[RMDB]
RNA sequence: GGGAACGACUCGAGUAGAGUCGAAAAAGCCUUCCUCUUCCCUUGUCACCUUGAGAUAAAAAUUCUUUAGGCAGGAAAAGAAAUGGAAGUCAGAAAAACAUUAGAAUAAGACAAUAAUGUGGGUGUCUGAAAAGGAACAAAUACUUAUUCCUCACAAAAUCACCAUUUUAUUCGUAAAAUGGUGAUUAAAAGAAACAACAACAACAAC
Reactivity to DMS in 0.01 (KOAc 150mM, MgCl2 10mM, bicine 150mM(pH8.5), 24C), signal-to-noise 3, nucleotides 027 to 156: a080g020c030c010u000u000c030c000u010c020u010u000c000c000c040u000u000g020u000c090a050c040c010u000u020g010a050g000a080u030a040a140a090a120a140u000u000c000u010u000u000a040g040g010c010a030g010g020a050a040a020a100g000a030a030a060u000g000g000a060a080g030u000c050a090g010a050a040a080a080a080c010a050u010u000a070g000a110a130u000a080a120g010a110c040a060a090u000a020a040u010g000u000g020g030g010u000g000u010c010u000g000a040a060a030a070g010g000a050a080c020a040a040a100u000a120c120u020u010a300u020u000c000c010u000c020a100c120a060a070
Reactivity to 2A3 in 0.01 (KOAc 150mM, MgCl2 10mM, bicine 150mM(pH8.5), 24C), signal-to-noise 4, nucleotides 027 to 156: a000g060c020c000u020u000c020c010u020c030u020u000c040c000c000u040u030g100u050c060a070c030c000u040u050g060a030g010a030u150a110a250a080a130a120u090u020c000u010u030u030a020g030g000c040a010g030g030a040a090a020a030g000a030a090a010u120g010g010a030a000g020u030c040a030g100a040a080a020a000a010c030a040u070u100a040g060a120a090u120a150a040g050a020c020a030a080u090a080a040u060g020u050g030g050g000u050g090u000c030u050g040a040a060a040a050g030g010a020a020c030a040a110a050u100a020c000u020u020a040u090u040c020c020u070c030a070c060a050a130